[RMDB]
An RNA of 177 nucleotides, treated with DMS and 2A3 and read out base by base. For DMS the reverse transcriptase was MarathonRT. For 2A3, 1,781 sequencing reads were counted. The RNA was probed in 150 mM KOAc, 10 mM MgCl2 and 150 mM bicine (pH 8.5) at 24 C. It was measured as part of the RMDB library M2PK90.

RNA sequence: GGGAACGACUCGAGUAGAGUCGAAAAUUAACUAGCGUAGGGAACCAAGCAAAGAGGUAAGAAAUCCCACGGUAGAAGGCUUGGUUCGCGCCGGAGGAAGAAGAUGUCCCACUCCCUACGCCACAAACCCGAAGUAUACUUUCGAGUAUACUUCGGGAAAAGAAACAACAACAACAAC
Reactivity to DMS in 0.01 (KOAc 150mM, MgCl2 10mM, bicine 150mM(pH8.5), 24C), signal-to-noise 2, nucleotides 027 to 126: u000u020a080a160c130u010a070g000c010g000u000a010g000g010g010a030a100c010c000a000a040g040c030a120a070a150g010a070g030g000u010a100a120g000a070a150a120u010c000c000c030a130c010g000g000u000a040g010a070a070g010g000c010u020u000g010g000u010u000c100g000c090g020c020c010g010g000a260g020g000a090a050g000a150a080g010a060u000g010u000c010c010c020a160c080u000c010c010c020u010a010c000g050c010c220a030c150a030a070a050
Reactivity to 2A3 in 0.01 (KOAc 150mM, MgCl2 10mM, bicine 150mM(pH8.5), 24C), signal-to-noise 2, nucleotides 027 to 126: u100u030a100a060c110u030a010g000c000g030u000a000g030g000g010a000a030c010c010a020a000g010c020a000a110a150g140a080g040g080u130a120a040g060a130a190a060u050c030c010c000a010c030g000g050u100a120g020a160a000g070g010c010u010u050g010g010u060u050c070g000c010g000c020c030g050g030a100g060g000a010a040g050a080a000g050a070u070g060u030c000c010c000a010c010u040c000c000c000u000a000c000g000c000c030a080c010a010a090a020